Notes:
This 177-nucleotide RNA was probed chemically with DMS and 2A3. For 2A3, 12,212 sequencing reads were counted. DMS adducts were read by reverse transcription with MarathonRT. Conditions: 150 mM KOAc, 10 mM MgCl2 and 150 mM bicine (pH 8.5), 24 C.
RNA sequence: GGGAACGACUCGAGUAGAGUCGAAAAGCCCCCACACUCCCUCUCGGCCCGAGGCUCUGAAGGGCACAACCAGGGCUCCACACUGAAGCAAUGGCCUCAGCUACAAAUAUCCCUCUCCUUGGUUCCCCAAUCCGGUAAAGUUCGCUUUACCGGAUUGAAAAGAAACAACAACAACAAC
Reactivity to DMS in 0.01 (KOAc 150mM, MgCl2 10mM, bicine 150mM(pH8.5), 24C), signal-to-noise 5, nucleotides 027 to 126: g030c050c030c020c070c050a100c080a120c080u000c020c010c010u010c040u010c100g000g020c030c020c040g010a120g010g000c030u000c050u010g020a110a120g000g000g000c040a050c090a070a080c120c050a080g020g000g010c030u000c030c020a090c080a080c050u000g000a070a090g010c050a080a090u030g000g010c020c010u020c040a050g000c030u000a070c130a080a050a110u030a140u010c030c020c020u000c030u000c000c020u000u010g000g020u010u000c000c020c000
Reactivity to 2A3 in 0.01 (KOAc 150mM, MgCl2 10mM, bicine 150mM(pH8.5), 24C), signal-to-noise 7, nucleotides 027 to 126: g000c000c000c000c010c000a040c010a020c050u050c000c010c000u020c000u020c040g040g000c000c010c020g040a060g030g020c020u020c020u080g090a100a090g020g020g000c020a020c010a050a030c010c020a030g020g020g000c010u020c020c010a070c000a020c030u060g030a050a010g020c050a040a150u100g060g010c000c010u030c010a030g010c010u060a040c050a050a120a010u140a060u060c010c000c000u020c010u020c000c000u020u050g040g000u010u010c000c000c000